[RMDB]
Annotation:
The record gives the reactivity of an RNA of 207 nucleotides to DMS and 2A3.

RNA sequence: GGGAACGACUCGAGUAGAGUCGAAAACAUACUUCAGCACAUUUUACUUUCAUGUAGGAUCAGGUAUUAUUCUCAUUGUCAAUUCAUGUAGAAUAGAAAUGAGGCUCAGAGAGGUUAAUAUACUGCUGAGAAAUCACACAGCCAGUCACUGGCAGAACAGCCUAAAUAGUUUCGACUAUUUAGGCUGAAAAGAAACAACAACAACAAC
Reactivity to DMS in 0.01 (KOAc 150mM, MgCl2 10mM, bicine 150mM(pH8.5), 24C), signal-to-noise 3, nucleotides 027 to 156: c010a110u000a080c070u000u000c020a060g020c020a080c040a100u010u000u000u010a080c020u000u000u010c050a080u000g010u000a070g030g000a070u000c030a050g020g020u000a100u000u000a040u000u010c000u010c010a070u000u020g020u000c050a100a180u000u000c010a030u000g020u010a020g030a030a030u000a060g000a070a100a150u010g010a050g020g000c050u010c020a050g010a120g030a020g010g000u010u010a030a060u000a100u000a060c060u000g020c010u010g010a080g010a080a060a070u010c050a050c090a090c050a050g020c000c000a170g010u010c080a050c050u000g000g020c020a070g000a080a190
Reactivity to 2A3 in 0.01 (KOAc 150mM, MgCl2 10mM, bicine 150mM(pH8.5), 24C), signal-to-noise 6, nucleotides 027 to 156: c010a040u160a070c030u060u070c030a010g030c020a050c010a130u060u050u040u130a040c050u050u080u110c080a160u130g080u140a030g060g030a040u040c020a020g080g000u080a080u150u020a020u080u050c010u000c010a010u070u090g160u080c080a060a140u150u050c010a020u080g080u190a030g020a030a010u010a010g040a010a060a010u030g010a010g040g020c010u020c040a010g040a010g010a010g040g030u050u030a080a020u080a030u040a130c030u010g020c000u000g010a010g050a010a070a010u090c030a030c040a020c020a100g120c010c020a010g010u200c050a070c200u010g010g050c090a010g020a050a030
The reactions ran in a buffer of 150 mM KOAc, 10 mM MgCl2 and 150 mM bicine (pH 8.5), at 24 C.
Reactivities are given for positions 27 through 156.
For 2A3 the reverse transcriptase was SuperScript II with manganese.